[RMDB]
RNA sequence: GGGAACGACUCGAGUAGAGUCGAAAAAUUACACAACUGCAUCAUUGACAAAGAAGUUUCAUUAAUGGCAGAAAUGGAUAAAGUUAAAGAAGAAGCCAUGGAAAUCCUGACUGCUCGUCAGAAGAAACACUAUGCGAAAGUUCGCUUUCGCAUAGUGAAAAGAAACAACAACAACAAC
Reactivity to DMS in 0.01 (KOAc 150mM, MgCl2 10mM, bicine 150mM(pH8.5), 24C), signal-to-noise 2, nucleotides 027 to 126: a060u000u010a080c060a060c050a080a110c030u010g000c050a050u020c060a050u010u000g000a070c100a050a120a030g000a110a100g020u010u000u000c010a080u000u000a070a010u000g010g020c030a030g000a080a070a060u000g000g010a120u010a090a080a080g000u000u000a060a070a120g010a050a100g000a120a080g020c030c040a010u000g010g010a090a120a080u010c060c010u000g000a070c020u000g000c110u000c190g010u010c040a020g000a050a110g000a080a080a110
Reactivity to 2A3 in 0.01 (KOAc 150mM, MgCl2 10mM, bicine 150mM(pH8.5), 24C), signal-to-noise 1, nucleotides 027 to 126: a000u070u130a020c040a030c020a080a180c000u020g000c000a030u000c000a000u000u110g040a030c030a080a120a020g110a090a020g100u040u050u000c040a050u040u200a120a010u020g010g020c030a020g060a030a120a040u030g030g040a030u090a080a100a000g100u060u050a190a110a000g060a070a010g050a090a000g010c030c000a020u030g030g120a000a150a000u040c010c000u000g030a010c000u040g060c050u070c060g060u020c010a030g030a040a010g030a030a060a000